[RMDB]
RNA sequence: GGGAACGACUCGAGUAGAGUCGAAAAUGUCACGUUCGCGUGACAAAAACCUUUGUGCAGAGGGUACUAAGACAGAUAGGGUGAUCCCAUUGGGAUCACAUUAUCAAUGACGGUACCUCCCCACCUGCACUCUGGUAAAUAGACGGUUCGCCGUCUAGACAUUCUAAGGAUUCGUCCUUAGAAUGUCAAAAGAAACAACAACAACAAC
Reactivity to DMS in 0.01 (KOAc 150mM, MgCl2 10mM, bicine 150mM(pH8.5), 24C), signal-to-noise 3, nucleotides 027 to 156: u000g030u000c010a000c000g010u020u000c290g040c060g070u000g010a000c010a020a020a070a110a070c020c000u000u000u000g080u000g020c000a060g000a300g000g030g010u000a020c030u000a080a180g020a230c090a070g000a010u000a010g000g020g050u000g010a010u000c000c000c020a300u000u010g040g040g000a000u000c010a010c000a000u000u000a020u000c000a080a100u000g000a130c220g000g010u000a000c000c000u000c120c080c010c040a300c160c000u000g000c000a010c020u000c020u010g020g020u000a040a080a150u010a050g020a030c000g020g000u000u010c260g040c010c000g000u010c000u000a040
Reactivity to 2A3 in 0.01 (KOAc 150mM, MgCl2 10mM, bicine 150mM(pH8.5), 24C), signal-to-noise 8, nucleotides 027 to 156: u100g000u000c000a010c020g010u070u100c290g040c040g080u030g000a010c030a000a060a010a000a050c010c000u010u000u010g000u000g000c010a000g010a020g030g000g000u000a010c010u050a060a110g100a090c060a030g020a020u020a000g070g020g010u000g000a000u000c010c030c120a300u220u300g010g000g000a000u000c000a000c000a010u000u000a000u000c070a110a260u090g020a020c070g020g000u000a000c000c000u050c010c000c000c000a040c000c000u000g000c000a000c000u000c010u010g000g010u040a070a100a070u080a040g000a000c010g000g060u040u060c210g050c110c010g000u000c000u000a020